RNA sequence: GGGAACGACUCGAGUAGAGUCGAAAAGGGCUCCCCGAUCCGAGGGGUCCGGCGUCCAGAUUUUGGAGGCACUCCGGACCGAAGGGUUGAGGUACCCAGAAGGAGGAAUCCACUCGGAGAGCGGGAGGAAUAGUAGUAUCUUCGGAUACUACUAUUCAAAAGAAACAACAACAACAAC
Reactivity to 2A3 in 0.01 (KOAc 150mM, MgCl2 10mM, bicine 150mM(pH8.5), 24C), signal-to-noise 4, nucleotides 027 to 126: g040g000g000c010u000c010c010c010c010g020a050u000c000c000g010a000g010g020g000g000u000c000c000g000g000c020g080u000c020c000a050g050a290u300u300u190u300g150g040a070g020g050c100a000c030u030c020c000g000g020a000c010c000g000a040a030g040g020g020u020u060g110a120g000g150u100a010c000c000c000a010g050a050a030g020g020a010g020g080a040a070u000c010c010a020c010u000c000g000g000a020g000a000g000c150g000g000g010a000g000
Reactivity to DMS in 0.01 (KOAc 150mM, MgCl2 10mM, bicine 150mM(pH8.5), 24C), signal-to-noise 5, nucleotides 027 to 126: g010g000g000c010u000c000c000c010c020g000a190u000c010c000g010a030g000g010g000g030u000c000c000g010g000c150g000u000c010c000a090g010a260u010u010u010u010g010g010a150g010g020c190a090c070u010c070c010g000g000a040c020c010g010a250a160g010g010g010u000u010g010a150g010g010u000a040c000c000c000a040g000a130a150g000g000a030g010g030a140a160u000c000c010a090c010u000c000g000g010a040g000a290g010c190g010g000g010a030g000

The record gives the reactivity of an RNA of 177 nucleotides to 2A3 and DMS. The RNA was probed in 150 mM KOAc, 10 mM MgCl2 and 150 mM bicine (pH 8.5) at 24 C. It was measured as part of the RMDB library VIROID. The 2A3 profile rests on 4,778 reads. For DMS, 4,849 sequencing reads were counted.